[RMDB]
RNA sequence: GGGAACGACUCGAGUAGAGUCGAAAACGCUGGGAAUGAAUAAAGGACGUAUAACGGUACUGAAGCGCGCACGGUACACGUUGCAAACUUUACAUUCCUGUGCUGAAGCGCGCACGGCAACCGAAAGGUGCGAAACUAACCAGCUUCGGCUGGUUAGGGCCUAACUGGGAUUCGUCCCAGUUAGGCCAAAAGAAACAACAACAACAAC
Reactivity to 2A3 in 0.01 (KOAc 150mM, MgCl2 10mM, bicine 150mM(pH8.5), 24C), signal-to-noise 1, nucleotides 027 to 156: c000g000c030u120g030g000g000a010a030u030g000a070a180u040a000a030a000g010g010a040c170g060u170a090u090a300a000c000g030g000u000a020c000u030g060a270a090g000c000g010c010g000c000a010c000g030g020u120a060c260a000c180g030u010u110g090c200a140a030a000c000u000u010u010a020c010a000u000u030c000c000u000g010u050g000c060u020g000a090a110g000c000g050c000g010c000a020c000g030g010c000a000a000c000c000g080a110a000a050g070g000u000g000c030g030a060a000a000c000u000a000a000c000c000a000g030c040u100u300c300g110g000c000u000g050g000u000u000a000g000
Source information
Conditions: 150 mM KOAc, 10 mM MgCl2 and 150 mM bicine (pH 8.5), 24 C. An RNA of 207 nucleotides, treated with 2A3 and read out base by base. The 2A3 profile rests on 525 reads. For 2A3 the reverse transcriptase was SuperScript II with manganese. The data come from the RNA Mapping Database (RMDB), library RNAMAK.